Notes
This 177-nucleotide RNA was probed chemically with 2A3 and DMS. The 2A3 profile rests on 3,051 reads. DMS adducts were read by reverse transcription with MarathonRT.

RNA sequence: GGGAACGACUCGAGUAGAGUCGAAAAGGGGGGAGGGCAGUGGAAUUGGCCAACGGCCCUGCGUAUAGUGAUGGCAUUUUGGACUGAAUUCCUCACGGAAAGAGCAUGGCUAAAAAAUACGCACAUAUCGAAAUACUUUAUUCGUAAAGUAUUUCGAAAAAGAAACAACAACAACAAC
Reactivity to 2A3 in 0.01 (KOAc 150mM, MgCl2 10mM, bicine 150mM(pH8.5), 24C), signal-to-noise 3, nucleotides 027 to 126: g020g000g000g020g000g000a060g000g000g000c020a020g020u070g040g050a130a090u140u140g060g030c010c020a040a030c060g030g010c020c010c030u030g000c000g020u100a100u060a150g090u050g080a110u160g020g000c040a020u070u060u040u080g140g050a130c070u070g020a040a040u060u020c000c000u030c010a030c030g030g030a040a070a030g050a020g000c040a050u070g050g000c020u100a090a040a030a000a030a000u070a000c030g020c070a020c030a070u180a060
Reactivity to DMS in 0.01 (KOAc 150mM, MgCl2 10mM, bicine 150mM(pH8.5), 24C), signal-to-noise 4, nucleotides 027 to 126: g030g010g010g000g010g020a080g000g000g010c050a070g030u010g000g010a150a090u010u000g020g010c020c040a060a090c150g020g010c030c010c100u010g010c050g010u010a070u000a090g000u000g010a140u010g020g010c050a070u000u000u000u010g010g010a130c110u010g000a090a090u000u000c010c010u000c130a080c120g010g000a060a060a090g000a080g020c020a070u010g020g000c030u020a000a010a080a070a070a100u000a020c040g020c040a070c260a100u010a090